[RMDB]
RNA sequence: GGGAACGACUCGAGUAGAGUCGAAAAGAUAUGGAGAAGGGAGUACGGCCAACAGCAGCCUAUAGCAAGAAUCGGAAACGAUUUGAUGACCUAUAGGCUGACAUGGCUGAAACCUUCUCCUAAGUCACAGAGUCAUCAAGUUCGCUUGAUGACUCUGAAAAGAAACAACAACAACAAC
Reactivity to DMS in 0.01 (KOAc 150mM, MgCl2 10mM, bicine 150mM(pH8.5), 24C), signal-to-noise 1, nucleotides 027 to 126: g010a080u010a300u000g000g020a040g010a070a000g000g020g050a210g060u010a190c280g020g000c000c000a060a140c300a180g000c000a000g010c000c000u000a000u000a000g000c080a150a120g000a000a060u000c000g020g000a060a210a140c000g000a000u030u000u000g000a070u000g000a060c300c000u000a000u010a040g000g050c000u000g010a000c100a180u050g000g050c020u000g000a130a060a270c000c000u000u000c020u000c000c070u000a020a040g000u000c050a290